This 177-nucleotide RNA was probed chemically with 2A3 and DMS. Conditions: 150 mM KOAc, 10 mM MgCl2 and 150 mM bicine (pH 8.5), 24 C. The DMS profile rests on 14,090 reads. It was measured as part of the RMDB library TTRDES.
[RMDB]
RNA sequence: GGGAACGACUCGAGUAGAGUCGAAAAGAUAUGGACUCGCAUGGAGGCAACAGCUGCUGUCGGAAACGACAGCAGACAUGCCUUCAUGGAGUCCUAAGUCAAACCGUUUUGCUUCGGCAAAACGGAACUAUCUCUACAUGUUCGCAUGUAGAGAUAGAAAAGAAACAACAACAACAAC
Reactivity to 2A3 in 0.01 (KOAc 150mM, MgCl2 10mM, bicine 150mM(pH8.5), 24C), signal-to-noise 6, nucleotides 027 to 126: g030a000u070a060u180g010g000a010c010u000c010g300c190a000u010g020g010a000g010g000c010a070a050c050a300g040c000u010g000c000u000g000u020c010g020g050a110a060a020c010g000a000c000a000g000c000a000g000a000c000a000u020g000c000c000u010u000c000a000u000g000g000a000g010u000c000c000u000a020a000g010u010c020a020a050a150c010c010g000u000u010u000u000g010c010u050u090c300g190g000c000a000a010a000a000c000g000g010a000a000
Reactivity to DMS in 0.01 (KOAc 150mM, MgCl2 10mM, bicine 150mM(pH8.5), 24C), signal-to-noise 7, nucleotides 027 to 126: g000a040u000a300u000g010g000a010c000u000c010g020c010a010u010g010g000a010g000g010c000a030a100c300a170g010c000u000g000c010u000g020u000c000g020g010a130a110a260c000g010a020c000a000g010c000a000g000a020c080a190u000g000c010c000u000u000c000a010u000g000g000a010g000u000c000c010u000a000a080g000u010c030a120a130a220c010c000g010u000u000u000u000g010c000u000u020c240g020g010c000a010a000a000a000c000g000g000a020a080

Reactivities are given for positions 27 through 126.